[RMDB]
RNA sequence: GGGAACGACUCGAGUAGAGUCGAAAAAGCCUAGGUAAGGUUAAAAGAGAUGGUAGCCUUGUCUGCCACAGGGAAGGAAGAUAGUUCCUCAGCCUACCUAAACCACUGUAGGUCAGAAAACGUAUCAUUCAGGUCAGAAAUGAGAUUGUGACAACAACAGGAGGAUAGAUUUCGAUCUAUCCUCCUGAAAAGAAACAACAACAACAAC
Reactivity to 2A3 in 0.01 (KOAc 150mM, MgCl2 10mM, bicine 150mM(pH8.5), 24C), signal-to-noise 3, nucleotides 027 to 156: a000g070c000c000u020a010g020g000u040a050a080g020g040u090u120a100a070a090a000g140a010g000a100u020g020g020u010a010g000c070c140u080u150g040u090c020u020g000c000c000a020c030a030g020g010g030a020a030g070g020a010a050g020a120u120a090g140u040u030c030c000u070c030a050g000c000c000u030a040c000c000u050a110a070a020c040c030a050c030u110g020u150a030g040g040u070c060a030g030a060a080a000a000c040g080u080a010u080c030a010u090u130c030a030g000g130u050c030a050g070a080a120a020u100g010a070g020a060u130u120g030u110g080a030c040a050a010c010a040a000
Reactivity to DMS in 0.01 (KOAc 150mM, MgCl2 10mM, bicine 150mM(pH8.5), 24C), signal-to-noise 2, nucleotides 027 to 156: a050g060c030c000u000a050g030g020u000a030a060g020g010u000u010a040a030a100a200g030a140g000a140u000g010g010u000a050g000c010c110u000u010g010u000c000u040g000c030c020a040c040a200g020g040g050a120a090g000g010a060a030g010a140u000a110g000u020u010c010c030u010c020a150g020c050c010u010a050c010c040u010a030a070a110c000c030a090c090u010g000u000a050g020g000u030c040a090g020a060a050a060a170c070g020u020a030u010c020a060u010u020c050a110g020g000u020c020a120g010a050a030a050u010g010a040g000a150u010u040g020u010g000a130c070a080a050c060a080a220
Source: RMDB library OK3TST, as collected in RNAgym. Chemical mapping of a 207-nucleotide RNA with 2A3 and DMS. Reactivities are given for positions 27 through 156. The RNA was probed in 150 mM KOAc, 10 mM MgCl2 and 150 mM bicine (pH 8.5) at 24 C.